This 207-nucleotide RNA was probed chemically with DMS and 2A3. For DMS the reverse transcriptase was MarathonRT. Conditions: 150 mM KOAc, 10 mM MgCl2 and 150 mM bicine (pH 8.5), 24 C. It was measured as part of the RMDB library RNAMAK.

[RMDB]
RNA sequence: GGGAACGACUCGAGUAGAGUCGAAAAGUGUAUUUCGAUACACUGCUGCCGUAGGCUCCCUGUGAGCGCAGGAGAUUUACACCUUCGAAAGAGGGUGUAUCCCUCCUGAACUACGCUCACCUGGAGCCUAAACGGACCUAAGGAUUUUCGAAUCCAACGUCAAUAAUGGCUUCGGCCAUUAUUGACGAAAAGAAACAACAACAACAAC
Reactivity to DMS in 0.01 (KOAc 150mM, MgCl2 10mM, bicine 150mM(pH8.5), 24C), signal-to-noise 1, nucleotides 027 to 156: g030u000g010u000a000u000u000u000c160g010a140u000a030c000a000c010u000g020c130u000g000c020c030g000u000a030g000g010c000u000c000c010c060u000g010u010g020a030g030c000g020c000a030g030g030a060g020a040u000u000u010a020c030a030c010c010u000u000c000g000a000a000a000g030a000g030g020g020u010g010u000a000u000c030c040c020u000c000c030u000g010a060a210c020u040a060c020g000c000u000c020a010c000c040u000g050g010a000g000c000c020u000a000a030a050c030g000g000a160c030c010u010a080a140g000g000a080u000u000u000u020c240g020a090a040u000c030c030a060a300
Reactivity to 2A3 in 0.01 (KOAc 150mM, MgCl2 10mM, bicine 150mM(pH8.5), 24C), signal-to-noise 2, nucleotides 027 to 156: g010u020g000u020a020u000u140u190c290g080a000u000a000c000a000c010u000g050c100u100g000c020c000g010u010a000g000g010c000u000c000c020c010u000g000u000g000a000g000c020g000c000a000g020g030a000g000a010u020u010u020a000c000a000c000c000u000u020c030g110a060a060a030g010a030g000g000g010u000g000u000a000u020c030c060c010u000c000c000u010g000a020a010c020u120a070c070g010c000u000c000a000c020c030u000g000g010a000g000c000c000u000a010a010a010c000g010g000a010c000c000u050a170a120g000g010a010u020u040u110u170c220g110a030a010u030c020c000a030a060